[RMDB]
RNA sequence: GGGAACGACUCGAGUAGAGUCGAAAACAAGGAGCUGGUCCUCUACUCGCCGCAACACGUCGCGCGGCUGGAAAAGGCAGGCCAAUUCCCCAAGCGGGUACAGCUGGGCCCGAACAGAGUGGGAUGGUGGCGCAAAUAAGUUCGCUUAUUUGCGCCAAAAAGAAACAACAACAACAAC
Reactivity to DMS in 0.01 (KOAc 150mM, MgCl2 10mM, bicine 150mM(pH8.5), 24C), signal-to-noise 2, nucleotides 027 to 126: c180a120a190g070g020a230g000c020u000g000g000u110c000c000u000c050u000a300c010u000c300g040c030c020g050c000a230a100c090a080c110g000u070c050g000c210g000c000g000g000c030u000g000g010a040a020a280a140g000g000c110a300g000g040c000c000a100a250u030u000c000c000c000c020a140a280g000c040g000g000g020u020a060c100a080g000c080u000g000g000g000c010c000c000g000a050a060c130a030g000a060g050u060g000g000g000a210u010g010g000
Reactivity to 2A3 in 0.01 (KOAc 150mM, MgCl2 10mM, bicine 150mM(pH8.5), 24C), signal-to-noise 2, nucleotides 027 to 126: c120a080a160g150g010a060g010c010u010g000g180u200c000c000u000c000u010a020c000u010c010g020c000c000g060c010a040a040c000a050c130g210u190c000g040c010g000c020g040g000c020u070g000g020a010a160a040a000g010g000c020a000g020g000c000c000a010a010u050u060c000c000c000c000a080a000g070c000g010g010g000u150a240c050a040g030c070u140g050g000g060c000c000c000g000a030a010c000a070g130a000g060u140g010g030g000a000u060g090g090